[RMDB]
Conditions: 150 mM KOAc, 10 mM MgCl2 and 150 mM bicine (pH 8.5), 24 C. The record gives the reactivity of an RNA of 170 nucleotides to DMS and 2A3. High 2A3 reactivity points to a flexible backbone, as in loops and unpaired stretches. For 2A3, 2,687 sequencing reads were counted. 2A3 adducts were read by reverse transcription with SuperScript II with manganese.
RNA sequence: GGGAACGACUCGAGUAGAGUCGAAAACGGGGGAGCCCCCUCCCCGUCCUUCCCUUUUCUGAUUAUUCCGACGAUGUUCCCCAGCCAGGGAUUUUCUUCCUCGAGUUUCUUGAUGGUCUUCCUGGUCUACGUCUCCCCUUCGGGGGAGACAAAAGAAACAACAACAACAAC
Reactivity to DMS in 0.01 (KOAc 150mM, MgCl2 10mM, bicine 150mM(pH8.5), 24C), signal-to-noise 1, nucleotides 027 to 129: c070g000g020g000g000g000a090g090c000c020c030c040c040u000c010c000c000c090g010u010c030c130u000u000c020c010c010u010u000u040u000c080u030g050a000u030u020a190u040u030c010c040g000a140c080g000a140u040g000u000u050c000c000c000c000a120g020c110c040a100g000g010g010a010u060u000u040u030c070u070u030c070c030u030c100g020a110g040u000u100u030c010u000u020g020a090u030g030g040u020c050u000u010c070c020u010g000g050u010c040u000a060c170
Reactivity to 2A3 in 0.01 (KOAc 150mM, MgCl2 10mM, bicine 150mM(pH8.5), 24C), signal-to-noise 1, nucleotides 027 to 129: c000g000g000g000g000g000a040g070c030c040c000c010c000u010c000c020c000c000g020u000c000c000u060u000c000c000c000u050u030u010u000c000u010g080a030u060u150a190u130u050c070c050g030a010c060g030a080u120g060u000u060c020c010c020c040a010g000c000c010a010g050g000g020a060u100u050u000u050c000u000u000c000c000u000c000g030a090g050u060u020u080c040u030u080g040a050u040g060g020u020c010u010u010c000c020u000g000g000u050c000u010a030c040